Conditions: 150 mM KOAc, 10 mM MgCl2 and 150 mM bicine (pH 8.5), 24 C. Chemical mapping of a 207-nucleotide RNA with 2A3 and DMS. For 2A3, 3,452 sequencing reads were counted. Source: RMDB library RNAMAK, as collected in RNAgym.
RNA sequence: GGGAACGACUCGAGUAGAGUCGAAAAGUGAAUACGCUGGGUAUAAUCCCAACGGUUAUCAAGAAGAACUCUGAAGCGCGCACGGAGUUCGGACCUUGUGCCGUUGAACUUAUACCUGUGCUGAAGCGCGCACGGCAACCGAAAGGUGCGAUUUUAACUUGUAGUGUUAGUUCGCUAACACUACAAGAAAAGAAACAACAACAACAAC
Reactivity to 2A3 in 0.01 (KOAc 150mM, MgCl2 10mM, bicine 150mM(pH8.5), 24C), signal-to-noise 3, nucleotides 027 to 156: g070u040g030a070a010u130a160c020g000c010u030g000g000g000u010a000u020a040a050u180c040c050c000a000a000c010g020g020u130u180a160u300c020a000a020g130a110a020g000a030a030c000u000c000u030g060a200a040g010c010g010c010g010c010a010c010g010g000a000g000u010u000c010g020g000a040c020c000u000u010g020u020g000c010c000g010u000u000g010a010a010c010u000u000a000u000a000c000c010u020g000u000g000c000u030g010a070a020g010c000g000c010g000c000a020c000g010g000c010a020a030c000c000g040a070a050a010g000g000u020g010c000g010a010u070u040u060u170a120a150
Reactivity to DMS in 0.01 (KOAc 150mM, MgCl2 10mM, bicine 150mM(pH8.5), 24C), signal-to-noise 1, nucleotides 027 to 156: g000u000g000a210a190u000a110c060g040c010u000g050g020g030u000a020u000a030a070u010c070c030c000a010a000c010g000g010u000u010a100u010c020a020a000g030a190a160g010a000a010c010u000c010u000g050a020a170g040c050g050c040g020c040a300c050g000g000a030g040u010u010c000g020g010a120c210c030u000u000g000u000g010c040c000g010u000u000g010a040a030c080u000u010a010u000a030c000c000u000g010u010g040c000u010g000a040a030g020c060g000c000g040c020a200c010g000g000c050a090a050c020c010g040a090a200a130g030g030u000g000c020g020a120u000u010u000u010a050a300